Source: RMDB library OK3TST, as collected in RNAgym. Structure probing data (2A3) for a 207-nucleotide construct. For 2A3 the reverse transcriptase was SuperScript II with manganese.
RNA sequence: GGGAACGACUCGAGUAGAGUCGAAAAGUUUCAGCGUGUAGGGUCUAGACAGAACUCACCAAUGAAAUAAAUUAGUCAUUGAGCACAUCAUCUCAUCAAGGCAAAGCGUAAAAUUGAUGUGGAAAAUAAAAAUAACAUCCUCAUUCUUUAUCCAUUAUCGAUUACUGGCUUUCGAGCCAGUAAUCGAAAAAGAAACAACAACAACAAC
Reactivity to 2A3 in 0.01 (KOAc 150mM, MgCl2 10mM, bicine 150mM(pH8.5), 24C), signal-to-noise 1, nucleotides 027 to 156: g000u000u050u000c030a020g000c060g040u080g050u080a050g010g030g050u010c030u020a040g050a110c040a040g050a070a110c020u020c050a020c010c010a030a030u020g010a000a040a040u160a040a210a040u050u200a070g060u020c030a010u030u090g160a040g060c050a020c000a080u040c000a050u020c020u000c010a140u010c100a070a030g050g000c020a040a050a090g040c050g050u070a060a000a150a040u060u100g020a010u080g020u020g000g070a050a050a050a050u080a020a110a110a050a000u060a040a020c020a050u010c010c010u030c060a130u110u000c050u070u170u070a130u050c030c000a080u060u140a050